An RNA of 177 nucleotides, treated with DMS and read out base by base. DMS adducts were read by reverse transcription with MarathonRT. Source: RMDB library TTRINS, as collected in RNAgym. For DMS, 4,119 sequencing reads were counted.
RNA sequence: GGGAACGACUCGAGUAGAGUCGAAAAGAUAUGGAGUUUAGCUGCACUAUGAUGGCCUUUCAUGCUAUCUCGGAAACGAGAUAGCAUGAAAGGCUUAAUAGUGAACUACAGCGAAGACUCCUAAGUCGAUAGGUAAAGAGUUCGCUCUUUACCUAUCAAAAGAAACAACAACAACAAC
Reactivity to DMS in 0.01 (KOAc 150mM, MgCl2 10mM, bicine 150mM(pH8.5), 24C), signal-to-noise 3, nucleotides 027 to 126: g010a100u010a300u020g010g000a020g000u010u000u000a300g000c000u000g000c010a010c000u000a020u000g000a180u000g000g000c000c000u020u010u000c000a010u000g020c010u000a010u000c000u000c010g000g000a120a140a230c010g010a020g000a020u000a000g000c010a010u000g000a000a000a000g020g000c000u000u000a020a000u000a020g000u000g000a080a030c070u010a300c010a000g000c000g010a200a230g000a020c000u000c000c000u000a020a120g000u000c080